An RNA of 207 nucleotides, treated with 2A3 and DMS and read out base by base.
DMS adducts were read by reverse transcription with MarathonRT.
The RNA was probed in 150 mM KOAc, 10 mM MgCl2 and 150 mM bicine (pH 8.5) at 24 C.
The 2A3 profile rests on 1,079 reads.
Source: RMDB library M2RFPK, as collected in RNAgym.
RNA sequence: GGGAACGACUCGAGUAGAGUCGAAAAAAUGCCGCCUCAGUUCCAAGCUCUUUCGUGGCACUGUAAACAGUCCUAUUGAUUUAGGGGCAGUCAACCACGUUGCGAAGCUAAAUUAUCUGGUCGAGAGUUACGAUUCCCUACUUCGGUAGGGAAUCAACACGAAGCAAAAGUUCGCUUUUGCUUCGUGAAAAGAAACAACAACAACAAC
Reactivity to 2A3 in 0.01 (KOAc 150mM, MgCl2 10mM, bicine 150mM(pH8.5), 24C), signal-to-noise 2, nucleotides 027 to 156: a000a010u080g060c020c000g020c020c010u070c030a050g030u060u060c020c000a110a020g000c010u020c000u040u120u040c010g010u000g000g010c080a000c010u030g020u050a080a190a100c020a120g100u040c000c000u020a060u030u130g140a100u100u040u080a030g000g000g020g010c000a000g000u010c010a030a020c020c010a020c020g000u000u020g070c130g070a050a020g010c070u060a000a120a000u190u100a090u080c050u080g060g000u050c010g030a020g000a000g150u060u070a050c060g000a010u000u030c000c000c000u000a000c000u010u060c120g040g000u010a000g000g000g010a000a000u000c000a000a000
Reactivity to DMS in 0.01 (KOAc 150mM, MgCl2 10mM, bicine 150mM(pH8.5), 24C), signal-to-noise 1, nucleotides 027 to 156: a090a050u000g030c070c040g010c040c030u000c160a090g050u010u000c010c010a100a290g010c020u000c010u000u000u000c000g070u000g010g030c080a070c020u010g010u010a060a080a050c040a220g000u000c000c000u000a050u000u000g010a300u000u000u010a040g000g000g010g000c000a030g000u000c030a100a030c020c010a010c030g010u000u000g050c070g000a090a160g000c060u000a060a030a130u010u000a060u020c030u010g000g010u000c030g000a050g020a120g000u000u000a090c070g010a050u010u000c000c000c010u000a010c000u010u020c280g060g010u000a000g000g000g000a000a000u000c000a030a150